[RMDB]
The data come from the RNA Mapping Database (RMDB), library OK1LIB. An RNA of 177 nucleotides, treated with 2A3 and read out base by base. The RNA was probed in 150 mM KOAc, 10 mM MgCl2 and 150 mM bicine (pH 8.5) at 24 C. Reactivities are given for positions 27 through 126. The 2A3 profile rests on 526 reads.
RNA sequence: GGGAACGACUCGAGUAGAGUCGAAAAGAAUUGGUAUGUAAGCUACUUCUUCCGGUAGCUGCGUCACACUUUAAGAGUGUGCAUACUGAGCCGAAGCUCAGCUUCGGUCCCCCAAGGGAAGAUCAAAAUGGCACCAUCGAUUCGUCGAUGGUGCCAUAAAAGAAACAACAACAACAAC
Reactivity to 2A3 in 0.01 (KOAc 150mM, MgCl2 10mM, bicine 150mM(pH8.5), 24C), signal-to-noise 1, nucleotides 027 to 126: g090a000a060u000u010g000g060u010a000u010g000u010a000a000g000c000u000a000c000u060u050c000u000u000c000c000g000g000u000a000g000c010u000g000c020g000u000c020a000c060a000c000u050u080u290a300a240g170a080g200u000g020u030g000c000a000u070a000c000u000g000a000g000c000c000g000a000a000g000c090u180c300a000g000c000u050u000c000g000g000u000c000c000c000c000c000a030a010g170g000g000a000a000g000a060u230c170a000a170a000